[RMDB]
RNA sequence: GGGAACGACUCGAGUAGAGUCGAAAAGCAGCUCUUGGACACCAUCGGAAAGAUGUCCUGCAAUCCGGCCGUCGGGGGACUCGCCAAGGGGAACAUCGUGCGCGAGGUGGAUGCCCUGGGCGGCGAGUCUCUCGCGCUUAUUCGUAAGCGCGAGAGAAAAAGAAACAACAACAACAAC
Reactivity to 2A3 in 0.01 (KOAc 150mM, MgCl2 10mM, bicine 150mM(pH8.5), 24C), signal-to-noise 2, nucleotides 027 to 126: g020c000a030g010c010u050c000u170u130g040g010a000c000a020c050c060a110u170c080g040g100a110a020a050g020a040u030g000u030c010c050u020g000c000a010a070u010c040c050g070g030c000c000g030u050c040g000g000g000g000g010a060c000u020c020g050c010c000a050a050g060g010g030g080a050a040c020a070u140c050g170u080g030c080g000c010g030a020g010g010u060g080g090a110u190g020c070c020c000u090g140g070g000c000g020g000c030g000a020g000
Reactivity to DMS in 0.01 (KOAc 150mM, MgCl2 10mM, bicine 150mM(pH8.5), 24C), signal-to-noise 2, nucleotides 027 to 126: g020c050a050g020c060u000c060u000u000g010g000a050c060a070c070c040a040u030c120g000g000a130a080a090g010a030u000g010u000c040c000u010g020c070a150a090u010c040c030g000g030c060c060g050u000c050g000g000g000g010g000a070c010u000c010g030c000c000a060a190g010g010g000g030a170a140c030a030u010c040g040u000g020c070g010c030g010a160g010g010u000g000g010a100u020g000c000c000c000u000g020g020g020c240g010g010c020g010a010g010